About this RNA
The record gives the reactivity of an RNA of 177 nucleotides to 2A3 and DMS. Conditions: 150 mM KOAc, 10 mM MgCl2 and 150 mM bicine (pH 8.5), 24 C. Values cover nucleotides 27 to 126. The data come from the RNA Mapping Database (RMDB), library TTRDES.

RNA sequence: GGGAACGACUCGAGUAGAGUCGAAAAGAUAUGGAUCCCAUAGAAGCGAUAAGCGUGUGGUCGGAAACGACCAUAACGCUUUUGACGCUUCGUGGGAUCCUAAGUCAAAGAGCCGUUCGCGGCUCAACAAUAACCAAGCGUUCGCGCUUGGUUAUUGAAAAGAAACAACAACAACAAC
Reactivity to 2A3 in 0.01 (KOAc 150mM, MgCl2 10mM, bicine 150mM(pH8.5), 24C), signal-to-noise 2, nucleotides 027 to 126: g020a010u050a020u130g000g000a000u000c030c000c050a020u050a150g010a000a000g000c050g060a060u040a220a010g010c000g020u000g020u000g020g000u000c000g030g060a050a040a100c010g020a000c010c010a000u020a040a010c000g010c000u030u030u010u040g040a040c080g000c000u010u010c000g000u050g000g000g010a000u030c000c000u000a020a000g010u000c000a060a120a160g000a010g000c020c010g030u070u140c300g000c020g080g000c000u010c020a000a020
Reactivity to DMS in 0.01 (KOAc 150mM, MgCl2 10mM, bicine 150mM(pH8.5), 24C), signal-to-noise 2, nucleotides 027 to 126: g000a030u010a300u000g000g000a000u000c000c000c000a030u000a100g020a010a000g030c000g010a190u000a010a010g010c010g060u000g020u000g000g000u010c000g010g010a070a110a220c000g030a000c000c000a000u000a010a020c000g010c000u000u000u010u010g010a200c110g020c000u010u000c000g010u000g000g000g000a010u000c000c000u000a020a060g000u000c030a110a130a120g000a010g020c000c000g010u000u010c210g010c010g020g020c000u000c010a050a110